An RNA of 207 nucleotides, treated with 2A3 and read out base by base. Source: RMDB library OK3TST, as collected in RNAgym. Conditions: 150 mM KOAc, 10 mM MgCl2 and 150 mM bicine (pH 8.5), 24 C. For 2A3, 840 sequencing reads were counted. 2A3 is a SHAPE reagent: it acylates the 2'-hydroxyl of flexible nucleotides of all four kinds. 2A3 adducts were read by reverse transcription with SuperScript II with manganese. Values are in units of 0.01, from 0 to 300, in steps of 10.
RNA sequence: GGGAACGACUCGAGUAGAGUCGAAAAGUCACGAGGAGACUCGUGACAGCAUGCUUCGGCAUGCAAGGGUCGGCAUGGCAUCUCCACCUCCUCGCGGUCCGACCUGGGCAUCCGAAGGAGGACGCACGUCCACUCGGAUGGAUAAUGGAGAGCCAAAGACGCAGGGAUUAUUCGUAAUCCCUGCGUCAAAAGAAACAACAACAACAAC
Reactivity to 2A3 in 0.01 (KOAc 150mM, MgCl2 10mM, bicine 150mM(pH8.5), 24C), signal-to-noise 1, nucleotides 027 to 156: g000u000c000a000c010g000a000g010g010a000g010a030c010u000c000g000u000g000a000c000a020g000c000a000u030g000c060u000u050c200g180g000c000a000u000g040c000a020a080g000g000g020u000c000g000g020c130a140u030g010g020c010a300u040c010u040c000c010a020c000c000u030c010c000u150c090g120c030g060g020u000c000c010g000a000c000c010u070g000g040g040c010a000u000c020c000g040a090a010g070g000a170g000g010a040c070g060c150a030c180g000u000c010c000a030c050u070c030g030g020a010u000g010g010a020u020a120a090u090g000g000a000g000a000g000c000c000a030a050a000